[RMDB]
RNA sequence: GGGAACGACUCGAGUAGAGUCGAAAAUCCGUUUUCUAAGAAAUUUACGGCAUCCUGAUUAAGAACGCUGAAUUUUUAAUCUAAAAAUCAGGUUCACCGAAUACUGCGCGUCUCUAUACGAACGACUGCGAACUUCACUGUUCGCAGUGAAGUUCGCAAAAGAAACAACAACAACAAC
Reactivity to 2A3 in 0.01 (KOAc 150mM, MgCl2 10mM, bicine 150mM(pH8.5), 24C), signal-to-noise 1, nucleotides 027 to 126: u010c000c000g000u050u000u070u000c120u110a190a040g040a010a100a040u200u090u060a100c060g000g000c000a020u040c000c000u130g070a150u200u020a200a020g000a070a000c100g000c190u020g120a130a120u000u000u000u000u130a090a170u110c110u070a000a000a000a000a000u000c000a000g000g000u000u000c100a100c110c030g010a030a070u080a120c070u110g010c130g000c000g000u020c000u010c070u010a060u020a210c280g110a090a000c000g070a060c080u010